This 207-nucleotide RNA was probed chemically with 2A3 and DMS. Conditions: 150 mM KOAc, 10 mM MgCl2 and 150 mM bicine (pH 8.5), 24 C. The DMS profile rests on 2,234 reads. 2A3 adducts were read by reverse transcription with SuperScript II with manganese.
RNA sequence: GGGAACGACUCGAGUAGAGUCGAAAACUGAGAUUUGGAGCCUGGAGAUUAUGGGUGUUGAGAAAACAUUGAAGCCAAAAGCCCUGGUCAUUGUUCAAGUGUUUGGUGGCCCAGAGUGGAUAGAGCCUGUAAGGAUGGGUGUGAUCCUUUUUAGGAACAUGGAGUCGUAUUUCGAUACGACUCCAUGAAAAGAAACAACAACAACAAC
Reactivity to 2A3 in 0.01 (KOAc 150mM, MgCl2 10mM, bicine 150mM(pH8.5), 24C), signal-to-noise 2, nucleotides 027 to 156: c070u050g030a030g080a150u030u100u140g020g020a000g040c060c070u070g100g030a070g000a050u040u080a040u160g060g020g020u090g020u040u030g070a070g140a050a240a000a030c040a020u070u110g060a090a010g050c070c010a030a150a000a030g000c000c000c000u010g010g000u050c040a070u000u130g040u040u050c070a120a050g030u010g090u100u050u060g050g000u040g010g000c030c000c000a030g030a030g060u090g030g030a030u050a070g030a000g020c010c010u010g010u050a030a000g000g000a010u030g000g000g050u060g000u040g040a040u050c010c010u080u110u060u070u230a030g020g000a050a040
Reactivity to DMS in 0.01 (KOAc 150mM, MgCl2 10mM, bicine 150mM(pH8.5), 24C), signal-to-noise 1, nucleotides 027 to 156: c010u020g010a140g000a120u020u010u000g020g030a110g010c030c000u000g000g000a080g010a110u000u000a070u000g020g010g040u000g020u000u010g010a230g010a080a060a040a070c080a060u010u020g000a080a180g000c000c060a080a090a120a180g030c030c050c000u000g000g020u010c030a080u000u050g000u000u000c010a090a140g010u000g000u000u000u010g050g030u000g020g030c050c010c050a070g010a130g020u010g010g010a110u000a060g020a110g000c080c010u000g000u010a090a090g050g020a060u000g020g050g010u000g040u000g010a090u000c010c000u000u000u010u010u000a080g020g000a030a300